Notes:
This 177-nucleotide RNA was probed chemically with 2A3. Reactivities are given for positions 27 through 126. The data come from the RNA Mapping Database (RMDB), library OK1LIB. The RNA was probed in 150 mM KOAc, 10 mM MgCl2 and 150 mM bicine (pH 8.5) at 24 C.
RNA sequence: GGGAACGACUCGAGUAGAGUCGAAAAUGGACGUCGGAGACGAGCUAAUCGCGAUUUCCGACAAACGCGGACCCCCCCGUCAUGACCGCCCACCCCUCGCCACGUCGACCGCCCCCUCGCCACACCCCGCAUACGAAAAGUUCGCUUUUCGUAUGCGAAAAGAAACAACAACAACAAC
Reactivity to 2A3 in 0.01 (KOAc 150mM, MgCl2 10mM, bicine 150mM(pH8.5), 24C), signal-to-noise 1, nucleotides 027 to 126: u210g090g050a020c040g010u010c010g020g020a010g000a040c100g030a070g050c130u170a150a130u180c110g010c020g130a270u030u010u000c010c000g000a000c010a000a010a000c010g020c030g020g020a040c000c000c000c000c000c000c000g050u000c020a090u150g020a000c000c030g020c030c000c000a000c010c000c000c000u020c010g000c040c000a020c010g070u030c030g010a010c010c020g010c000c000c000c000c000u010c030g000c000c030a060c000a040c010c000c000